Source information:
An RNA of 177 nucleotides, treated with DMS and 2A3 and read out base by base. The reactions ran in a buffer of 150 mM KOAc, 10 mM MgCl2 and 150 mM bicine (pH 8.5), at 24 C.
[RMDB]
RNA sequence: GGGAACGACUCGAGUAGAGUCGAAAAGAUAUGGAAUGCGGGUGGGAGUUGUAUUCGGAAACGAAUAUACAACAUCGAUCACUACAUUCCUAAGUCAAACUUGCGCAUACUUCGGUAUGCGCAAGAACACCAUUGGUGUGUUCGCACACCAAUGGUGAAAAGAAACAACAACAACAAC
Reactivity to DMS in 0.01 (KOAc 150mM, MgCl2 10mM, bicine 150mM(pH8.5), 24C), signal-to-noise 2, nucleotides 027 to 126: g010a020u000a090u010g000g000a000a000u000g020c150g000g010g000u000g030g010g010a190g010u000u000g000u010a020u000u000c000g030g010a030a030a060c010g020a020a050u000a160u000a040c020a000a030c020a190u010c270g010a140u000c010a020c000u010a080c000a000u000u000c000c000u000a010a110g000u000c000a110a100a210c020u010u000g000c010g030c000a010u000a000c000u000u030c270g060g010u010a000u000g010c000g000c000a000a000g000a090a270
Reactivity to 2A3 in 0.01 (KOAc 150mM, MgCl2 10mM, bicine 150mM(pH8.5), 24C), signal-to-noise 1, nucleotides 027 to 126: g000a010u040a010u080g010g050a040a030u050g100c300g210g100g000u040g020g150g100a110g010u020u010g020u020a030u030u020c000g010g000a020a010a000c010g000a000a010u210a050u030a120c030a010a000c000a090u190c210g160a140u150c010a000c030u040a020c000a010u010u040c010c000u010a040a010g030u010c030a050a050a170c000u000u000g000c000g000c000a040u000a000c000u020u120c300g070g000u020a030u000g030c020g000c000a000a000g000a000a000